[RMDB]
RNA sequence: GGGAACGACUCGAGUAGAGUCGAAAAGCAAGUGCGCUUCCAGUAUGGACCCUUUUGCAGCCUCGUGAUUAUCUUUCAUCAUUCCUACUCUACACUGGUGUUGGCGGAGCCCUCUUAGCUGUCAUUGUAGGAACCGUUCUUGGAACCGCGAACCAACUACUACCAGUGAUUUCGAUCACUGGUAGUAAAAAGAAACAACAACAACAAC
Reactivity to DMS in 0.01 (KOAc 150mM, MgCl2 10mM, bicine 150mM(pH8.5), 24C), signal-to-noise 2, nucleotides 027 to 156: g000c020a100a130g010u000g020c090g030c030u000u000c010c050a150g030u000a100u000g020g000a250c040c020c030u000u000u000u010g020c070a080g020c000c060u000c090g030u030g020a110u000u000a120u010c070u010u020u000c040a090u000c070a170u000u000c020c000u000a080c080u000c050u010a050c050a090c060u000g020g010u000g040u000u000g030g030c010g030g000a060g030c060c030c020u000c030u000u000a060g010c010u020g020u020c100a100u000u020g020u030a080g010g030a060a110c010c020g000u000u000c080u020u010g010g000a030a130c020c030g020c030g000a070a160c020c010a010a140c060
Reactivity to 2A3 in 0.01 (KOAc 150mM, MgCl2 10mM, bicine 150mM(pH8.5), 24C), signal-to-noise 3, nucleotides 027 to 156: g090c100a070a010g080u050g070c040g010c020u030u010c010c000a070g060u090a070u080g030g000a090c010c010c030u020u020u090u070g060c060a020g010c010c010u060c070g090u070g050a090u030u150a060u100c060u040u120u080c030a080u040c010a080u100u070c000c010u040a060c020u030c010u090a030c070a060c090u060g000g030u050g020u120u100g040g030c040g000g060a050g020c020c020c000u040c010u040u170a030g000c050u030g010u060c040a080u050u070g060u090a050g000g010a010a050c030c030g050u080u030c060u060u120g040g000a030a030c050c020g020c010g040a010a020c050c020a020a050c010
Structure probing data (DMS and 2A3) for a 207-nucleotide construct.
The DMS profile rests on 3,745 reads.
It was measured as part of the RMDB library OK3TST.
For 2A3 the reverse transcriptase was SuperScript II with manganese.